Conditions: 150 mM KOAc, 10 mM MgCl2 and 150 mM bicine (pH 8.5), 24 C. Structure probing data (DMS) for a 177-nucleotide construct. The DMS profile rests on 1,798 reads. The data come from the RNA Mapping Database (RMDB), library TTRDES. Reactivities are rounded to 0.1 and cut off at 0 and 3.
RNA sequence: GGGAACGACUCGAGUAGAGUCGAAAAGAUAUGGAAACCGAUAAGCAACAGCGGUGACAUCGGAAACGAUGUACCGACAUGCUUUCGGUUUCCUAAGUCAAACUCAUCGGCCUUCGGGCCGAUGAGAUCACAAGGUACUCUUCGGAGUACCUUGUGAAAAAGAAACAACAACAACAAC
Reactivity to DMS in 0.01 (KOAc 150mM, MgCl2 10mM, bicine 150mM(pH8.5), 24C), signal-to-noise 1, nucleotides 027 to 126: g000a020u000a050u010g030g000a000a000a000c000c000g000a010u010a010a000g000c000a130a090c230a120g000c000g000g000u000g010a000c000a010u000c010g000g020a020a030a030c000g010a000u000g000u020a000c010c000g020a000c040a250u020g010c000u000u000u010c000g000g000u000u000u000c020c000u000a000a050g020u000c000a170a180a270c010u000c020a010u000c000g000g010c010c000u000u000c270g060g000g030c040c000g020a000u000g010a000g000a020